[RMDB]
RNA sequence: GGGAACGACUCGAGUAGAGUCGAAAAUCAUCAUUUUUUAUGGCUGCAUAGUAUUCCGUGGUGUAUAUGUGCCACAUUUUCUUAAUCCAGUCUAUCAUUGAUGGAUAUUUGGGUUGGUUCCAAGUCUUUGCUAUUGUGAGUAGUGCCACAAUAAACACGAUAAUGUUUCGUUCGCGAAACAUUAUCGAAAAGAAACAACAACAACAAC
Reactivity to DMS in 0.01 (KOAc 150mM, MgCl2 10mM, bicine 150mM(pH8.5), 24C), signal-to-noise 2, nucleotides 027 to 156: u010c040a090u020c020a040u000u000u000u000u000u000a040u020g050g000c010u010g050c050a050u000a100g020u000a140u020u000c070c110g010u000g000g010u010g020u010a130u000a100u010g010u000g040c020c030a020c030a080u000u020u000u000c040u000u010a040a060u000c030c000a030g020u000c000u000a060u000c080a190u000u010g000a030u000g020g010a050u000a020u000u010u000g030g030g010u000u000g000g000u000u000c030c030a070a300g010u000c030u000u000u000g040c060u000a050u000u010g040u010g060a170g010u000a120g020u010g020c090c010a080c030a040a010u010a060a070a040c080a150
Reactivity to 2A3 in 0.01 (KOAc 150mM, MgCl2 10mM, bicine 150mM(pH8.5), 24C), signal-to-noise 4, nucleotides 027 to 156: u060c000a000u010c010a020u010u100u000u030u080u150a080u230g000g000c010u020g020c040a030u030a090g010u120a130u100u100c180c150g000u020g050g000u050g130u060a080u050a090u300g140u110g040c000c000a000c000a010u110u120u050u010c010u050u140a040a020u030c030c000a010g070u040c020u030a040u070c050a150u060u070g010a010u000g010g020a020u020a060u110u070u060g010g000g010u010u040g070g030u050u020c030c010a030a020g030u020c030u030u120u080g030c010u020a020u020u020g010u010g020a010g000u060a020g010u040g080c010c000a020c010a030a040u080a050a080a010c110a010